[RMDB]
RNA sequence: GGGAACGACUCGAGUAGAGUCGAAAAACUGCGACAGGGCGGAAGCGUGAAACAAAAUGCAUCUCGGCAAUGCUCUGCGCUUCUACAUACCAGCAGCCGAGAACUGGCGCAGAAAACAAGCGCAGCCAAAUAUUUAUAAUUUCGAUUAUAAAUAUUUAAAAGAAACAACAACAACAAC
Reactivity to DMS in 0.01 (KOAc 150mM, MgCl2 10mM, bicine 150mM(pH8.5), 24C), signal-to-noise 2, nucleotides 027 to 126: a160c010u010g020c000g040a090c000a010g020g010g010c040g000g020a030a020g010c000g000u020g000a100a070a180c230a130a030a050a060u030g020c030a090u010c010u010c000g030g020c010a140a030u010g000c110u030c150u010g040c000g000c000u010u000c030u010a080c180a150u030a120c070c090a170g010c010a100g010c000c000g000a030g000a070a060c010u000g000g000c000g000c010a010g010a120a060a110a120c110a100a110g010c080g010c090a040g000c200c060
Reactivity to 2A3 in 0.01 (KOAc 150mM, MgCl2 10mM, bicine 150mM(pH8.5), 24C), signal-to-noise 2, nucleotides 027 to 126: a000c000u020g000c000g000a020c000a030g020g040g060c030g080g010a060a030g010c020g010u030g080a140a100a020c070a040a100a080a020u160g010c010a020u010c000u010c020g010g000c030a050a100u080g020c020u030c090u150g000c000g000c000u000u010c000u050a060c000a090u150a090c000c050a030g010c000a010g030c030c010g030a030g010a040a050c020u010g000g000c000g000c010a000g100a030a040a000a040c040a070a020g000c040g010c040a030g070c020c030
Chemical mapping of a 177-nucleotide RNA with DMS and 2A3. The reactions ran in a buffer of 150 mM KOAc, 10 mM MgCl2 and 150 mM bicine (pH 8.5), at 24 C. DMS adducts were read by reverse transcription with MarathonRT. Source: RMDB library OK1LIB, as collected in RNAgym.